[RMDB]
RNA sequence: GGGAACGACUCGAGUAGAGUCGAAAAUAUUAUAACCGGACACUUGGCCUAUCCCUUGGUAAAGGAGAUGGCGGAUAAAUCAAAUAAGGAAACUGUAGUUCAUAUAGCAGAGACUCAAGUGGCUGCUAAUACCAUAUCGCUUCGGCGAUAUGGUAUUAAAAGAAACAACAACAACAAC
Reactivity to DMS in 0.01 (KOAc 150mM, MgCl2 10mM, bicine 150mM(pH8.5), 24C), signal-to-noise 2, nucleotides 027 to 126: u030a010u020u020a090u020a200a260c170c010g000g040a030c040a070c040u000u000g010g030c110c000u010a170u000c040c030c030u010u000g000g050u050a040a020a170g030g000a050g000a020u000g040g020c020g000g000a060u020a050a170a070u000c150a060a160a030u020a140a100g010g010a010a110a070c000u010g000u000a100g000u070u000c120a090u050a030u090a080g010c040a020g000a100g000a060c110u010c050a030a020g050u000g000g020c020u040g000c040u010
Reactivity to 2A3 in 0.01 (KOAc 150mM, MgCl2 10mM, bicine 150mM(pH8.5), 24C), signal-to-noise 3, nucleotides 027 to 126: u150a020u150u150a040u080a110a080c010c020g060g030a020c040a000c040u050u020g070g040c010c020u010a030u070c040c000c000u070u050g300g040u300a090a010a000g040g030a080g020a030u110g010g060c080g000g000a110u190a040a040a020u140c160a110a090a070u230a110a050g030g030a010a160a080c020u050g030u040a040g060u070u070c090a060u140a030u070a130g000c010a000g000a000g030a080c000u000c070a000a070g010u040g080g000c000u010g000c020u020
Source: RMDB library OK1LIB, as collected in RNAgym. An RNA of 177 nucleotides, treated with DMS and 2A3 and read out base by base. For DMS, 1,843 sequencing reads were counted. For DMS the reverse transcriptase was MarathonRT. 2A3 adducts were read by reverse transcription with SuperScript II with manganese. The 2A3 profile rests on 1,509 reads.